[RMDB]
Record summary: Conditions: 150 mM KOAc, 10 mM MgCl2 and 150 mM bicine (pH 8.5), 24 C. An RNA of 177 nucleotides, treated with DMS and read out base by base.
RNA sequence: GGGAACGACUCGAGUAGAGUCGAAAAGAUAUGGAUAGAGGCAACAGCUACCGGUCGGAAACGACCGAGUAGACAUGCCUCGUCCUAAGUCAAAACUAGCCCUUGUACUUCGGUACAAGGGCUAGAAGAAUUGUUGUAGCUUCGGCUACAACAAUUCAAAAGAAACAACAACAACAAC
Reactivity to DMS in 0.01 (KOAc 150mM, MgCl2 10mM, bicine 150mM(pH8.5), 24C), signal-to-noise 1, nucleotides 027 to 126: g000a030u010a180u000g000g000a000u000a030g000a000g000g010c020a040a080c250a170g000c020u000a010c000c020g000g040u000c000g010g000a070a070a170c000g020a000c000c000g000a030g010u000a020g010a130c080a190u000g000c010c000u010c000g000u020c000c000u010a030a120g010u000c010a110a050a190a250c000u000a000g000c000c010c000u030u000g020u000a000c000u000u020c160g000g040u020a000c000a010a020g000g000g000c000u000a000g000a010a140